RNA sequence: GGGAACGACUCGAGUAGAGUCGAAAAUUACUCACUCAUAAUCAAGGGCUGCCGCAUGAAGUGGUAGAAAAGCAUAUUGCAGGCCAUGCGAUAAGCCGUCUCACAAUUUGUGUGGUUAUUACUAUGCGAUGUACCUCUGAUUCGUCAGAGGUACAUCAAAAGAAACAACAACAACAAC
Reactivity to 2A3 in 0.01 (KOAc 150mM, MgCl2 10mM, bicine 150mM(pH8.5), 24C), signal-to-noise 5, nucleotides 027 to 126: u110u060a060c010u010c070a020c010u050c030a080u090a170a060u080c110a100a100g090g020g010c020u020g000c010c010g000c010a010u010g030a140a030g020u020g040g080u110a060g120a020a090a010a000g010c010a050u060a070u100u190g000c000a010g090g160c050c010a030u030g010c010g020a010u010a070a030g000c000c010g050u010c020u040c020a060c000a060a120u000u060u020g040u030g030u010g050g010u010u050a030u070u030a130c130u070a100u090g100c070
Reactivity to DMS in 0.01 (KOAc 150mM, MgCl2 10mM, bicine 150mM(pH8.5), 24C), signal-to-noise 5, nucleotides 027 to 126: u020u010a090c040u010c040a050c120u010c020a090u010a080a100u020c080a160a130g010g000g000c040u000g010c090c010g020c040a050u000g010a100a180g030u000g020g000u010a040g000a070a060a110a110g010c090a100u000a060u010u010g000c000a090g020g030c150c100a050u000g010c000g040a020u010a040a070g010c010c040g000u010c050u000c060a100c200a090a090u020u000u030g010u000g010u000g000g000u010u000a020u000u010a140c070u010a060u000g000c300

Chemical mapping of a 177-nucleotide RNA with 2A3 and DMS. 2A3 is a SHAPE reagent: it acylates the 2'-hydroxyl of flexible nucleotides of all four kinds. The reactions ran in a buffer of 150 mM KOAc, 10 mM MgCl2 and 150 mM bicine (pH 8.5), at 24 C. DMS adducts were read by reverse transcription with MarathonRT.